RNA sequence: GGGAACGACUCGAGUAGAGUCGAAAACGUGCCAUGUUCGCAUGGCACGAAAUAUAGGAAACAGGAAGGCAUCGGCGCACGAUGUAACAAGCGCAAAAUAAAAAACAUUUCACUUCGGUGAAAUGAACUAGUAAGAUAAGUUCGCUUAUCUUACUAGAAAAGAAACAACAACAACAAC
Reactivity to 2A3 in 0.01 (KOAc 150mM, MgCl2 10mM, bicine 150mM(pH8.5), 24C), signal-to-noise 9, nucleotides 027 to 126: c010g010u000g010c010c000a000u010g030u040u050c190g010c130a000u000g010g000c000a000c000g000a000a000a000u160a020u040a030g120g020a060a070a030c040a030g060g050a060a020g060g000c000a010u030c030g030g000c030g010c040a080c110g020a010u050g030u120a030a030c060a100a030g020c020g010c050a030a060a090a010u240a050a110a020a000a000a000c000a010u000u000u010c010a010c010u030u080c230g100g000u000g000a010a000a000u000g000a010a020
Reactivity to DMS in 0.01 (KOAc 150mM, MgCl2 10mM, bicine 150mM(pH8.5), 24C), signal-to-noise 9, nucleotides 027 to 126: c020g030u000g000c000c000a010u010g010u000u020c220g030c000a020u000g000g000c000a000c000g000a020a050a060u010a090u010a120g010g000a060a060a070c080a060g000g010a060a060g000g010c010a030u000c040g000g010c040g010c040a080c040g010a040u000g020u010a050a070c110a050a170g010c030g010c050a100a050a060a070u030a020a060a060a070a070a110c010a010u000u000u000c000a000c000u000u010c190g020g010u000g000a000a000a010u000g000a040a110